RNA sequence: GGGAACGACUCGAGUAGAGUCGAAAAGCUCUGAGAGACAGAUCGAACAACAAAGAGAGAACGAAAAUCUUAGGGGAGAGAACGAAUCUGUCGUCUUCUCUAGGACAUUGUCGAUCAGAUGUCCAAAGACCAUACAUUGCUUCGGCAAUGUAUGGUCAAAAGAAACAACAACAACAAC
Reactivity to DMS in 0.01 (KOAc 150mM, MgCl2 10mM, bicine 150mM(pH8.5), 24C), signal-to-noise 2, nucleotides 027 to 126: g010c150u000c000u000g000a000g000a300g000a000c020a040g000a160u000c000g000a080a110c070a160a290c220a150a050a090g010a130g000a150g100a070a110c050g060a030a100a150a200u000c000u000u000a040g040g000g000g030a000g000a040g030a160a130c060g000a100a080u040c060u040g060u000c000g000u020c010u000u000c060u000c020u000a010g010g000a010c050a050u000u000g000u000c000g000a090u000c070a070g030a050u000g040u000c000c000a050a030a150
Reactivity to 2A3 in 0.01 (KOAc 150mM, MgCl2 10mM, bicine 150mM(pH8.5), 24C), signal-to-noise 2, nucleotides 027 to 126: g000c000u000c000u000g050a070g000a000g000a000c010a010g030a040u020c000g020a010a030c050a030a010c020a040a300a020g190a040g050a010g000a040a030c040g050a000a120a050a030u010c000u000u000a000g040g000g000g000a000g000a010g060a130a040c000g030a070a100u120c080u100g210u050c040g060u020c000u000u000c000u000c000u000a000g000g000a000c060a130u050u050g010u000c000g000a000u000c020a000g000a000u060g020u000c040c020a000a100a000
Chemical mapping of a 177-nucleotide RNA with DMS and 2A3. DMS adducts were read by reverse transcription with MarathonRT. Conditions: 150 mM KOAc, 10 mM MgCl2 and 150 mM bicine (pH 8.5), 24 C. It was measured as part of the RMDB library OK1LIB. Reactivities are given for positions 27 through 126.